The data come from the RNA Mapping Database (RMDB), libraries RFM100 and RFMREP. This 177-nucleotide RNA was probed chemically with 2A3 and DMS. The RNA was probed in 150 mM KOAc, 10 mM MgCl2 and 150 mM bicine (pH 8.5) at 24 C. For DMS the reverse transcriptase was MarathonRT. For 2A3 the reverse transcriptase was SuperScript II with manganese.

[RMDB]
RNA sequence: GGGAACGACUCGAGUAGAGUCGAAAAUUCCAUCUAAAGCUAAAUAUUGGUGCGAGACCGAUAGCGAACAAGUACCGUGAGGGAAAGAUGAAAAGAACUUUGAAAAGAGAGUUAAAGAGUACCUGAACAUGUAAUCGAGUUUCGACUCGAUUACAUGAAAAGAAACAACAACAACAAC
Reactivity to 2A3 in 0.01 (KOAc 150mM, MgCl2 10mM, bicine 150mM(pH8.5), 24C), signal-to-noise 5, nucleotides 027 to 126: u050u000c000c000a020u050c050u170a120a110a060g030c010u040a050a130a120u230a210u100u180g040g000u020g020c060g030a050g100a070c010c000g050a030u060a020g030c010g020a020a020c020a100a040g040u030a030c000c050g040u100g050a080g020g030g010a030a020a020g030a020u120g060a020a060a000a040g090a010a010c010u080u100u130g080a080a060a050a030g120a000g000a000g030u070u100a060a070a030g060a030g020u020a010c000c020u020g010a020a010
Reactivity to DMS in 0.01 (KOAc 150mM, MgCl2 10mM, bicine 150mM(pH8.5), 24C), signal-to-noise 8, nucleotides 027 to 126: u010u010c020c000a100u040c080u010a070a130a170g010c040u030a060a090a100u010a080u010u010g000g010u000g010c210g000a150g010a060c040c010g000a050u000a040g010c030g000a090a100c110a040a060g020u000a120c030c020g000u020g010a120g010g000g020a070a050a080g000a070u010g010a070a050a080a100g000a040a060c030u000u010u010g000a070a060a080a110g000a100g000a060g000u000u010a060a060a060g010a140g020u000a070c130c010u000g000a070a170